[RMDB]
RNA sequence: GGGAACGACUCGAGUAGAGUCGAAAAUUCUCUGUAAUAACGUCGUUUUGCAAAACUGCAAUGGUCCUGAGCCGAUAAGCCUCUAAUGAAAUUAUAGACUCAUCGGCUCAGGACCAUUGCGGUUGUGGUAUCGUAAAUUGUUCGCAAUUUACGAUACAAAAGAAACAACAACAACAAC
Reactivity to DMS in 0.01 (KOAc 150mM, MgCl2 10mM, bicine 150mM(pH8.5), 24C), signal-to-noise 2, nucleotides 027 to 126: u010u000c000u000c000u010g020u010a170a080u000a120a160c170g020u000c080g000u000u000u020u000g010c130a100a080a030a020c000u000g000c000a010a000u000g000g000u000c000c000u010g000a030g010c010c000g000a000u000a030a000g010c000c000u000c060u000a020a020u000g010a080a040a300u000u000a010u000a020g000a020c000u000c020a020u000c000g020g000c010u000c000a000g000g010a000c000c010a000u000u000g010c000g000g000u000u000g010u010g010
Background:
An RNA of 177 nucleotides, treated with DMS and read out base by base. Conditions: 150 mM KOAc, 10 mM MgCl2 and 150 mM bicine (pH 8.5), 24 C. DMS adducts were read by reverse transcription with MarathonRT.